[RMDB]
RNA sequence: GGGAACGACUCGAGUAGAGUCGAAAAUUACAAGCAUAUUUUUGGGGACUGUCCCUGACAAUGGUGAGCAAGCUCAGCUCGUACUGAGAAGCCUAAAGUUGUUAUCAUGGUUACCCACCUUAGCUAAAGUAUGCACACAGUUCGCUGUGUGCAUACUAAAAGAAACAACAACAACAAC
Reactivity to 2A3 in 0.01 (KOAc 150mM, MgCl2 10mM, bicine 150mM(pH8.5), 24C), signal-to-noise 5, nucleotides 027 to 126: u170u060a060c060a110a020g020c080a050u040a060u190u100u050u060u100g000g000g000g020a020c020u030g000u030c010c000c010u000g000a000c000a010a020u060g010g030u070g030a100g050c000a170a070g010c000u000c010a010g000c010u160c150g050u100a140c020u000g000a000g000a030a000g000c000c010u150a160a050a010g020u000u010g000u000u020a030u160c080a010u020g020g030u020u210a300c000c000c020a020c000c040u050u110a030g030c020u050a150a070
Reactivity to DMS in 0.01 (KOAc 150mM, MgCl2 10mM, bicine 150mM(pH8.5), 24C), signal-to-noise 2, nucleotides 027 to 126: u010u040a050c140a200a090g000c100a100u030a020u000u010u010u000u020g000g000g000g000a100c030u030g000u010c000c070c020u000g000a000c030a030a010u010g020g000u030g000a110g050c000a040a150g000c000u000c010a010g000c010u060c190g010u040a140c000u000g000a020g000a070a050g020c000c010u010a080a080a170g000u000u000g000u010u020a020u030c120a070u010g010g000u000u000a060c000c000c000a070c150c060u010u010a040g020c060u000a110a100